This 177-nucleotide RNA was probed chemically with 2A3 and DMS. Source: RMDB library M2PK90, as collected in RNAgym. 2A3 adducts were read by reverse transcription with SuperScript II with manganese.
RNA sequence: GGGAACGACUCGAGUAGAGUCGAAAAUUAAUCGGGCUUGUUUGCGCCGCGUAUGCGCUUGCUUGCUUGCUUGCGGGCGAACGGGCUUCUUCCCUUUUGGCGCUUGCUUGCGGGCGGGCAAAAUGAACGAGAAGUUGUUAUUCGUAACAACUUCUCGAAAAGAAACAACAACAACAAC
Reactivity to 2A3 in 0.01 (KOAc 150mM, MgCl2 10mM, bicine 150mM(pH8.5), 24C), signal-to-noise 1, nucleotides 027 to 126: u130u050a050a100u090c030g000g040g030c060u070u170g020u100u140u100g020c130g010c000c010g080c020g030u100a100u130g010c020g000c020u010u040g030c040u030u050g000c000u040u050g010c050u060u090g020c030g000g030g000c000g000a020a020c030g000g030g030c040u100u070c010u090u120c010c010c000u040u050u030u060g030g010c010g000c010u010u010g010c010u010u030g000c040g010g000g000c010g000g000g010c000a030a020a000a020u130g010a040a030
Reactivity to DMS in 0.01 (KOAc 150mM, MgCl2 10mM, bicine 150mM(pH8.5), 24C), signal-to-noise 2, nucleotides 027 to 126: u000u010a070a090u000c070g000g010g020c030u000u000g010u000u010u000g010c050g020c020c040g010c060g000u000a060u000g020c090g010c070u000u020g000c040u010u000g000c020u000u000g020c000u000u000g020c000g010g000g010c000g010a030a050c120g010g010g010c300u000u010c150u000u000c040c000c010u000u000u000u000g010g010c050g020c010u000u000g010c020u000u000g030c030g030g010g000c000g000g000g000c010a020a040a080a080u010g000a100a150
Record summary:
For DMS the reverse transcriptase was MarathonRT. Conditions: 150 mM KOAc, 10 mM MgCl2 and 150 mM bicine (pH 8.5), 24 C.